[RMDB]
RNA sequence: GGGAACGACUCGAGUAGAGUCGAAAAAUGCCGCAUUCAGUGACGGUAACUCUAGUGGGCUACUGUCAAUCUAGCGUUGACAUCUACAUACUAUAUAGUAAUACCAAUACUCAAGACUACGAAACGGCCGAUAGGAUCACUUCGGUGAUCCUAUCGGAAAAGAAACAACAACAACAAC
Reactivity to 2A3 in 0.01 (KOAc 150mM, MgCl2 10mM, bicine 150mM(pH8.5), 24C), signal-to-noise 2, nucleotides 027 to 126: a000u200g060c000c000g050c020a040u080u070c060a040g050u020g030a070c030g020g000u000a060a060c020u000c010u000a080g140u160g070g010g000c030u080a010c000u000g000u030c000a000a040u040c060u090a070g000c030g120u010u030g010a000c020a100u040c030u060a070c050a150u130a050c020u020a040u050a030u070a130g030u090a040a080u000a140c020c000a040a000u020a080c020u060c020a040a000g050a030c100u000a020c020g040a070a070a000c060g030g000